[RMDB]
The record gives the reactivity of an RNA of 207 nucleotides to DMS and 2A3. Values cover nucleotides 27 to 156. DMS (dimethyl sulfate) methylates the pairing face of unpaired adenines and cytosines. As a SHAPE reagent, 2A3 marks flexible, mostly unpaired nucleotides at the ribose 2'-OH. The reactions ran in a buffer of 150 mM KOAc, 10 mM MgCl2 and 150 mM bicine (pH 8.5), at 24 C.
RNA sequence: GGGAACGACUCGAGUAGAGUCGAAAAGUUCGUGAACGUGUUCGAUCGUGAACGAGAGAGUGAUCACACGUGUGAGUGAUCUCGAUCACACGUGAACUCGUUCGUUCUCUCGUUCUCGUGUGAGAACGAGAGAACUCGUGAACUCUCACGUGUGUACCACUGCAGAGAAGUUCGCUUCUCUGCAGUGAAAAGAAACAACAACAACAAC
Reactivity to DMS in 0.01 (KOAc 150mM, MgCl2 10mM, bicine 150mM(pH8.5), 24C), signal-to-noise 2, nucleotides 027 to 156: g020u010u000c030g090u000g010a070a040c030g000u010g000u000u020c050g010a130u000c040g020u030g000a090a070c040g010a050g000a170g010a200g050u010g010a120u000c020a180c010a050c090g020u000g030u020g000a110g000u020g000a050u000c060u010c060g000a150u000c000a190c000a010c020g000u000g000a050a110c040u000c050g000u000u000c020g000u000u000c010u000c010u000c010g020u010u000c010u000c000g040u000g020u010g010a020g000a000a030c010g000a030g000a030g010a020a000c010u000c070g010u010g000a050a070c020u000c050u000c030a050c030g000u000g000u000g010u000a100c130
Reactivity to 2A3 in 0.01 (KOAc 150mM, MgCl2 10mM, bicine 150mM(pH8.5), 24C), signal-to-noise 4, nucleotides 027 to 156: g020u020u030c010g020u040g050a010a000c050g000u040g060u250u180c130g100a190u060c030g010u040g030a020a010c030g000a010g010a000g000a020g050u120g060a090u090c020a020c020a010c130g040u060g050u080g140a080g020u090g050a080u030c030u050c060g050a060u050c000a010c000a010c030g000u010g000a020a020c010u010c030g010u030u010c010g000u000u000c000u000c000u000c000g000u000u000c000u000c010g110u280g040u230g060a000g000a000a000c000g000a000g020a010g000a010a000c010u010c040g040u060g000a010a000c000u000c010u010c010a020c020g020u020g010u040g000u030a020c000